Structure probing data (2A3 and DMS) for a 207-nucleotide construct. For 2A3 the reverse transcriptase was SuperScript II with manganese. Values cover nucleotides 27 to 156. For DMS, 5,979 sequencing reads were counted. For 2A3, 7,334 sequencing reads were counted.
RNA sequence: GGGAACGACUCGAGUAGAGUCGAAAAUUAACGAGAUGUAUCGGACGUACGCAGUUCAGGGCCGCUACAAGAAGAAGGUCAAGGCGCGUGAGGUAUGGGAUGCAAUCCUCAAGAGCCAGGUGGAGACGGGAACGCCGUACAUGUGCUACAAGGAUUCACUAUUGUUUGUGUUCGCACAAACAAUAGUAAAAGAAACAACAACAACAAC
Reactivity to 2A3 in 0.01 (KOAc 150mM, MgCl2 10mM, bicine 150mM(pH8.5), 24C), signal-to-noise 6, nucleotides 027 to 156: u130u070a040a040c050g010a020g010a100u080g030u070a060u090c030g020g030a010c040g050u100a020c060g020c050a050g030u070u060c050a030g040g040g000c030c010g010c050u100a040c060a050a030g110a070a000g050a040a020g080g000u030c060a030a060g030g000c040g010c040g030u060g020a020g010g020u110a060u100g060g000g000a010u080g020c030a010a040u020c010c010u030c030a040a030g010a010g030c010c020a010g000g060u040g020g070a090g010a030c010g010g000g000a060a040c050g010c030c010g010u030a020c020a060u100g070u140g020c010u020a040c010a040a050g040g010a050u060u070c030
Reactivity to DMS in 0.01 (KOAc 150mM, MgCl2 10mM, bicine 150mM(pH8.5), 24C), signal-to-noise 3, nucleotides 027 to 156: u010u010a050a130c110g020a150g030a140u020g000u000a040u020c030g040g010a090c070g030u000a110c070g010c030a100g010u000u000c060a080g020g030g020c030c000g010c030u000a140c050a090a120g010a070a080g010a080a060g030g040u010c030a100a080g020g010c040g000c010g040u000g000a060g030g030u010a080u010g010g030g000a100u010g020c070a100a150u000c000c010u000c050a070a070g000a060g010c010c030a060g020g040u000g030g000a170g010a060c030g010g010g030a090a120c020g020c010c020g000u000a040c060a050u010g040u010g020c010u000a080c080a020a100g000g020a120u000u010c060